The record gives the reactivity of an RNA of 177 nucleotides to DMS. Reactivities are given for positions 27 through 126. DMS adducts were read by reverse transcription with MarathonRT. The RNA was probed in 150 mM KOAc, 10 mM MgCl2 and 150 mM bicine (pH 8.5) at 24 C.
RNA sequence: GGGAACGACUCGAGUAGAGUCGAAAACAUCCACUGCUACGGCAGUGGAUGAACGAGGUAGGUACGCCUACCUCGAAAGGGGGAUGUCUUCAUAGACAUUAAACGUCCAUGGUACGCCAUGGACGAAUGAGUCAUGGUCGUUCGCGACCAUGACUCAAAAAGAAACAACAACAACAAC
Reactivity to DMS in 0.01 (KOAc 150mM, MgCl2 10mM, bicine 150mM(pH8.5), 24C), signal-to-noise 1, nucleotides 027 to 126: c000a010u000c000c000a000c010u000g010c010u000a100c210g040g060c000a010g040u000g000g010a000u000g010a030a140c040g000a000g030g010u000a010g000g020u000a080c300g000c040c000u000a000c000c000u000c000g000a040a110a170g020g000g000g000g040a040u000g000u010c000u000u010c240a100u000a050g000a040c010a010u000u000a020a110a170c050g000u000c010c000a000u000g050g010u000a110c300g000c000c010a000u000g000g000a000c030g000a000a040